Background
The data come from the RNA Mapping Database (RMDB), library RFMREP. The record gives the reactivity of an RNA of 177 nucleotides to 2A3 and DMS. For 2A3 the reverse transcriptase was SuperScript II with manganese.
RNA sequence: GGGAACGACUCGAGUAGAGUCGAAAAAAGGUAGCGUAAUACCUAGCCGCUUAAUUGGCGGCUCGCAUGAAGGUUCAACGAGAGUCCCACUGUCCCCACAUUCAGCCCCGUGAAAUUAAUGUACUGGCCAUAAUCUUGUGUUCGCACAAGAUUAUGGAAAAGAAACAACAACAACAAC
Reactivity to 2A3 in 0.01 (KOAc 150mM, MgCl2 10mM, bicine 150mM(pH8.5), 24C), signal-to-noise 2, nucleotides 027 to 126: a000a000g000g000u030a020g040c090g090u120a140a000u000a100c000c000u000a010g000c000c000g010c070u070u170a170a050u240u240g030g010c000g010g000c000u030c000g050c020a040u170g030a120a020g010g000u060u080c070a080a040c050g040a010g020a020g160u060c000c020c000a030c030u020g060u040c020c010c010c000a060c000a010u110u060c020a010g080c020c000c000c040g070u040g050a090a070a010u110u080a040a070u050g020u010a060c050u040g040g000
Reactivity to DMS in 0.01 (KOAc 150mM, MgCl2 10mM, bicine 150mM(pH8.5), 24C), signal-to-noise 2, nucleotides 027 to 126: a030a030g010g040u000a020g010c180g030u000a110a060u000a040c060c010u000a040g000c000c000g000c000u010u000a100a120u020u010g020g000c020g000g010c010u010c140g020c140a100u020g030a100a090g000g010u000u000c030a090a090c110g010a110g010a190g000u000c010c030c030a120c070u010g000u010c020c010c000c040a040c090a090u000u000c070a070g000c040c010c010c020g000u010g000a060a080a060u010u000a070a070u000g000u000a090c070u010g010g010